[RMDB]
RNA sequence: GGGAACGACUCGAGUAGAGUCGAAAAAUACACUGCACGUGCGUGCGAGCAGUUUUCGAAAUAAUCGUACGUACGUAAAGACCCAACUCUACUCGAUGCGAGGGACAGCAAAGUCGUUCCCAUAUAAGUUUGUAACCGUAUUCGUACGGUUACAAACAAAAGAAACAACAACAACAAC
Reactivity to DMS in 0.01 (KOAc 150mM, MgCl2 10mM, bicine 150mM(pH8.5), 24C), signal-to-noise 1, nucleotides 027 to 126: a110u020a100c070a100c080u020g000c300a050c000g010u000g000c060g000u010g000c000g010a080g030c180a080g000u000u010u000u000c180g000a090a020a000u000a020a140u000c000g030u000a010c000g030u000a050c040g000u000a030a260a020g000a190c050c180c060a090a040c000u000c000u000a010c020u000c000g000a130u000g020c000g000a180g040g000g020a030c170a170g020c000a130a280a060g010u000c000g000u010u000c000c000c000a000u000a020u000a090a110
Reactivity to 2A3 in 0.01 (KOAc 150mM, MgCl2 10mM, bicine 150mM(pH8.5), 24C), signal-to-noise 1, nucleotides 027 to 126: a000u110a020c050a000c100u050g020c070a000c010g000u000g000c000g020u020g000c000g000a030g020c170a060g000u010u020u010u280c180g170a050a070a040u090a000a060u070c000g000u000a020c000g000u000a010c000g000u000a000a040a000g040a010c020c020c000a000a030c000u000c000u030a000c000u020c010g020a030u080g000c010g020a130g050g120g000a010c010a020g030c000a040a080a020g020u000c000g000u000u000c010c030c040a000u000a000u000a000a010